[RMDB]
RNA sequence: GGGAACGACUCGAGUAGAGUCGAAAAUGAAAGCUGUGUGAGCGAGGCGGGCGGAGGAUGAGGCCGUGCCCGGGCUCUGGCUGCAGCCGCCCGGGGACACGCCGUGCACGCUCGGGCUCCGGAAAAACUAGUGUACGCUGUUCGCAGCGUACACUAGAAAAGAAACAACAACAACAAC
Reactivity to DMS in 0.01 (KOAc 150mM, MgCl2 10mM, bicine 150mM(pH8.5), 24C), signal-to-noise 1, nucleotides 027 to 126: u010g010a120a110a110g000c020u010g020u000g020u000g000a010g000c040g000a090g010g000c010g000g000g010c030g020g000a120g010g010a120u010g000a080g000g050c060c160g020u000g000c000c010c010g010g000g000c040u000c100u000g060g000c120u000g030c190a220g020c030c120g010c010c000c000g000g000g020g000a060c010a050c030g040c020c020g000u000g030c040a070c010g000c000u000c000g000g020g020c010u010c010c020g000g000a070a050a050a090a080